The record gives the reactivity of an RNA of 177 nucleotides to DMS and 2A3. DMS adducts were read by reverse transcription with MarathonRT. The RNA was probed in 150 mM KOAc, 10 mM MgCl2 and 150 mM bicine (pH 8.5) at 24 C. The DMS profile rests on 9,322 reads. 2A3 is a SHAPE reagent: it acylates the 2'-hydroxyl of flexible nucleotides of all four kinds.

[RMDB]
RNA sequence: GGGAACGACUCGAGUAGAGUCGAAAAGAUAUGGACCCAUGUGGUCGCAACAGCUAACUCGGAAACGAGUUAGACAUGCGGACCACUGGGUCCUAAGUCAAAGGCCAAAGUCUUCGGACUUUGGCCAGAUGUCUAUUAUGUUCGCAUAAUAGACAUCAAAAGAAACAACAACAACAAC
Reactivity to DMS in 0.01 (KOAc 150mM, MgCl2 10mM, bicine 150mM(pH8.5), 24C), signal-to-noise 6, nucleotides 027 to 126: g010a060u000a300u000g010g000a010c000c000c000a010u000g040u000g000g010u000c010g020c050a040a100c300a200g000c010u010a000a000c000u000c000g010g000a110a110a210c000g010a020g000u000u000a000g000a030c110a120u000g000c040g030g030a020c000c000a000c010u000g000g000g000u000c000c000u000a000a080g000u000c030a090a150a100g000g010c010c010a000a010a020g010u010c000u000u020c270g020g000a010c000u000u000u000g010g000c000c000a010
Reactivity to 2A3 in 0.01 (KOAc 150mM, MgCl2 10mM, bicine 150mM(pH8.5), 24C), signal-to-noise 6, nucleotides 027 to 126: g020a010u080a030u150g010g000a000c000c010c030a070u300g000u010g010g010u020c040g030c110a080a170c030a160g040c000u000a000a010c000u000c010g020g020a070a090a030c000g010a000g010u010u000a000g000a030c010a030u140g030c140g250g090a080c000c000a000c010u000g000g010g000u000c000c000u010a020a000g020u010c030a050a070a110g010g000c000c010a010a000a010g010u020c020u150u300c300g120g000a010c000u010u020u010g000g000c000c000a000